[RMDB]
RNA sequence: GGGAACGACUCGAGUAGAGUCGAAAACUAACCACGUUCGCGUGGUUAGAAAAGCGGCGAGCUCCAGGCCGCCAAACAAUAUGGAGCACAAGACGAAAGUCAAAAGUAUCUGCUUCGGCAGAUACAAGUAAAGAGCUAACUUCGGUUAGCUCUUUACAAAAGAAACAACAACAACAAC
Reactivity to 2A3 in 0.01 (KOAc 150mM, MgCl2 10mM, bicine 150mM(pH8.5), 24C), signal-to-noise 2, nucleotides 027 to 126: c000u000a000a000c000c000a000c010g010u030u030c140g000c010g120u010g000g010u000u000a000g010a010a080a000a040g010c000g010g000c000g000a050g000c000u000c000c000a010g000g000c000c000g000c040c010a060a120a010c020a000a020u090a080u150g000g000a000g030c020a010c020a000a010g010a000c010g020a130a010a010g000u030c010a040a050a050a050g000u000a000u000c010u010g010c010u080u130c250g100g010c000a000g010a000u000a000c000a000a000
Reactivity to DMS in 0.01 (KOAc 150mM, MgCl2 10mM, bicine 150mM(pH8.5), 24C), signal-to-noise 2, nucleotides 027 to 126: c000u010a000a040c000c000a000c010g010u000u000c260g010c000g080u000g010g030u000u000a000g000a060a040a070a180g010c020g010g010c000g020a110g000c000u000c000c020a010g000g040c000c000g010c010c220a030a060a100c070a010a020u010a140u000g020g010a000g030c040a130c300a080a070g060a010c010g000a160a050a210g010u000c000a100a090a080a050g000u000a010u000c000u000g010c000u020u010c230g020g000c000a000g000a040u000a000c010a040a070